[RMDB]
RNA sequence: GGGAACGACUCGAGUAGAGUCGAAAAUGAAAAUAUCCCAAGUCUUCUAAGCAAUCUGCUUAAGGCUUCCAAACUUACCUUAAUUUGGUAAGAAAAUAAGCUGCCCUAUUUUUCUUUCUUCUUCUCUUAUCAUGCCGUUUUUCGAAACGGCAUGAUAAAAAGAAACAACAACAACAAC
Reactivity to 2A3 in 0.01 (KOAc 150mM, MgCl2 10mM, bicine 150mM(pH8.5), 24C), signal-to-noise 2, nucleotides 027 to 126: u140g030a000a000a040a130u110a070u040c000c000c000a000a000g000u000c000u130u070c030u070a000a020g000c040a050a300u120c130u210g000c010u050u000a010a000g020g000c000u090u000c070c070a120a120a120c020u010u010a010c000c000u180u120a160a150u230u130u040g000g010u000a000a000g000a060a040a000a070u050a020a030g020c030u040g000c010c000c030u030a060u010u030u000u060u000c000u040u050u000c000u000u010c000u010u000c000u060c000u010
Background: The record gives the reactivity of an RNA of 177 nucleotides to 2A3. It was measured as part of the RMDB library RFM100.